[RMDB]
RNA sequence: GGGAACGACUCGAGUAGAGUCGAAAAGGCUCGUCUUAGAGCCAUUUGCUGAGGCGCAUGCUUUGCGUCAUGCAAAGUGCAUAUGCCGCCAGCGGGAUGGUGUGCAUUCUGUCCAUGGGAAACCGGGGACCGGGGAUCAGUUCGCUGAUCCCCGGUCAAAAGAAACAACAACAACAAC
Reactivity to DMS in 0.01 (KOAc 150mM, MgCl2 10mM, bicine 150mM(pH8.5), 24C), signal-to-noise 2, nucleotides 027 to 126: g010g020c020u000c010g010u030c190u020u010a110g020a030g010c000c000a020u000u000u010g030c010u000g000a300g010g020c000g040c070a030u000g010c020u000u000u000g030c000g000u010c280a060u020g010c000a020a000a030g020u000g000c110a040u000a010u000g020c000c010g000c130c000a030g030c030g050g000g000a070u000g010g020u000g000u010g000c090a100u000u000c070u000g000u000c020c020a110u000g010g000g010a060a110a200c020c030g020g000g000
Reactivity to 2A3 in 0.01 (KOAc 150mM, MgCl2 10mM, bicine 150mM(pH8.5), 24C), signal-to-noise 1, nucleotides 027 to 126: g030g000c030u030c020g130u080c220u250u220a050g010a020g040c000c010a030u100u080u090g030c000u040g040a060g000g000c010g000c010a010u100g020c030u030u050u050g010c000g110u120c140a040u160g000c030a040a060a000g020u070g070c040a040u050a030u180g000c020c020g050c080c000a000g020c100g060g040g030a100u080g010g020u020g050u110g060c000a030u070u080c010u010g020u000c040c000a160u070g040g020g060a080a140a050c030c040g080g000g000
Overview: Structure probing data (DMS and 2A3) for a 177-nucleotide construct. For 2A3 the reverse transcriptase was SuperScript II with manganese. For DMS, 1,327 sequencing reads were counted. The RNA was probed in 150 mM KOAc, 10 mM MgCl2 and 150 mM bicine (pH 8.5) at 24 C. The 2A3 profile rests on 1,010 reads.